[RMDB]
RNA sequence: GGGAACGACUCGAGUAGAGUCGAAAACGACCGCAGUUCGCUGCGGUCGAAAAGAACUGACUACCGUUCGCCUAGCCGGUGUCAGUUUAAGGGCGGAGAUUAAAACCCUGACGUUCGCGUCAGGGAACAGAGUACAAUCGUUCGCGAUUGUACUCUGAAAAGAAACAACAACAACAAC
Reactivity to 2A3 in 0.01 (KOAc 150mM, MgCl2 10mM, bicine 150mM(pH8.5), 24C), signal-to-noise 1, nucleotides 027 to 126: c020g030a010c030c000g000c000a020g000u030u120c130g050c070u020g010c020g000g000u000c010g000a000a000a000a020g050a010a000c010u000g020a000c030u080a020c080c020g020u080u110c040g010c040c080u100a060g090c010c000g000g000u010g000u000c010a000g000u000u020u030a050a020g040g000g050c050g070g050a120g020a070u140u260a050a110a100a150c000c020c000u000g000a000c000g000u020u100c260g010c020g120u010c000a010g000g000g000a000a000
Reactivity to DMS in 0.01 (KOAc 150mM, MgCl2 10mM, bicine 150mM(pH8.5), 24C), signal-to-noise 2, nucleotides 027 to 126: c040g000a000c000c000g050c010a010g000u000u010c170g040c010u000g000c010g000g000u010c010g000a010a010a100a190g010a020a020c000u010g010a000c000u020a010c010c000g000u000u010c140g000c130c080u000a150g020c300c000g000g000u000g000u000c000a000g000u000u000u010a020a110g000g000g010c080g000g000a100g000a070u000u000a040a110a140a150c000c000c000u000g010a010c000g020u000u020c210g030c010g020u000c000a020g000g000g010a000a000